[RMDB]
RNA sequence: GGGAACGACUCGAGUAGAGUCGAAAAAAAACGAGCGUAAUCGCGUCUUGACUAGACUCUUAGUGACGUGAGUAGGGAUCUAUCCCAGUGUGCAUAGCGCACAAUACGCUGAUUAACAGUCACGGAAACAUUAUAAUCGUUUCGACGAUUAUAAUGUAAAAGAAACAACAACAACAAC
Reactivity to 2A3 in 0.01 (KOAc 150mM, MgCl2 10mM, bicine 150mM(pH8.5), 24C), signal-to-noise 9, nucleotides 027 to 126: a000a000a000a000c100g020a020g000c020g030u020a040a020u000c000g000c010g020u020c020u140u270g050a020c010u010a050g060a140c040u020c030u280u040a020g000u010g030a000c010g000u010g010a010g010u070a080g030g010g010a030u040c050u130a130u060c050c000c000a010g010u010g000u010g000c040a130u150a270g070c040g000c030a000c000a000a010u040a010c010g000c020u010g010a070u060u100a060a040c040a060g090u050c040a020c110g080g030a120a130
Reactivity to DMS in 0.01 (KOAc 150mM, MgCl2 10mM, bicine 150mM(pH8.5), 24C), signal-to-noise 9, nucleotides 027 to 126: a030a020a030a060c140g010a030g010c020g010u000a040a070u000c010g010c000g000u000c020u010u010g020a060c030u000a040g010a130c200u010c090u010u000a030g010u000g010a020c000g010u000g000a030g010u010a120g010g000g010a070u000c150u010a070u010c000c000c000a120g010u000g010u000g010c010a180u010a100g010c190g010c000a010c000a040a080u000a020c010g010c030u000g000a070u010u000a080a070c170a110g000u000c060a070c100g000g000a140a080